[RMDB]
RNA sequence: GGGAACGACUCGAGUAGAGUCGAAAAAUGUAUGUAUGUAUGUAUGUGUGCAUGUGCAUGUGCAUGUAUGCAUAUUGCAUGUAUAUAUUAUGCAUACAAAAUCAAAGGAAUCUUCGGAUUCCUUUGAGAUUUACCCUAGGUUCGCCUAGGGUAAAUCAAAAGAAACAACAACAACAAC
Reactivity to 2A3 in 0.01 (KOAc 150mM, MgCl2 10mM, bicine 150mM(pH8.5), 24C), signal-to-noise 3, nucleotides 027 to 126: a000u050g000u010a000u010g010u010a000u020g080u010a000u000g010u000a010u010g030u000g010u010g010c020a000u010g000u000g010c010a010u030g040u100g120c080a040u260g030u100a010u010g010c000a000u000a030u010u050g000c000a010u000g000u000a000u000a000u000a000u060u030a010u020g000c010a000u000a020c000a010a080a020a030u020c000a000a000a010g000g010a000a000u000c010u050u090c250g050g000a000u000u010c010c000u010u000u000g000a000
Reactivity to DMS in 0.01 (KOAc 150mM, MgCl2 10mM, bicine 150mM(pH8.5), 24C), signal-to-noise 3, nucleotides 027 to 126: a130u010g010u010a010u000g000u000a000u000g010u000a000u010g020u000a000u000g020u000g030u000g010c030a000u000g010u000g010c010a010u000g030u010g020c290a080u000g020u000a010u000g000c010a010u010a010u010u010g010c000a010u000g000u000a010u000a010u000a010u000u010a020u000g000c000a010u000a010c010a040a060a100a250u000c000a010a010a000g000g000a020a000u000c010u010u010c170g030g000a010u000u000c000c000u000u000u000g010a030
Source: RMDB library RFMREP, as collected in RNAgym. The record gives the reactivity of an RNA of 177 nucleotides to 2A3 and DMS. The DMS profile rests on 5,397 reads. The RNA was probed in 150 mM KOAc, 10 mM MgCl2 and 150 mM bicine (pH 8.5) at 24 C. The 2A3 profile rests on 8,077 reads. Reactivities are rounded to 0.1 and cut off at 0 and 3.